[RMDB]
RNA sequence: GGGAACGACUCGAGUAGAGUCGAAAAGAUAUGGAUGUUCAUAGUAGAGAUGACAGGGAGCUGCUCACCUCGGAAACGAGGUGACAGCGAGGAUCUGUCAUCUCUACUAUGACGGCAUCCUAAGUCGGUAUUUAUGCACCUUCGGGUGCAUAAAUACAAAAGAAACAACAACAACAAC
Reactivity to DMS in 0.01 (KOAc 150mM, MgCl2 10mM, bicine 150mM(pH8.5), 24C), signal-to-noise 3, nucleotides 027 to 126: g000a070u000a300u000g010g010a010u000g030u000u000c000a000u000a000g020u000a020g010a060g010a020u000g000a020c000a030g000g010g000a030g020c000u000g010c300u000c000a000c000c010u000c010g010g030a130a110a250c000g020a030g000g010u000g000a030c010a000g000c000g000a050g000g020a010u020c010u010g000u000c000a000u010c010u000c000u000a000c010u000a000u000g000a030c300g010g010c030a010u010c010c010u000a070a140g010u010c100g020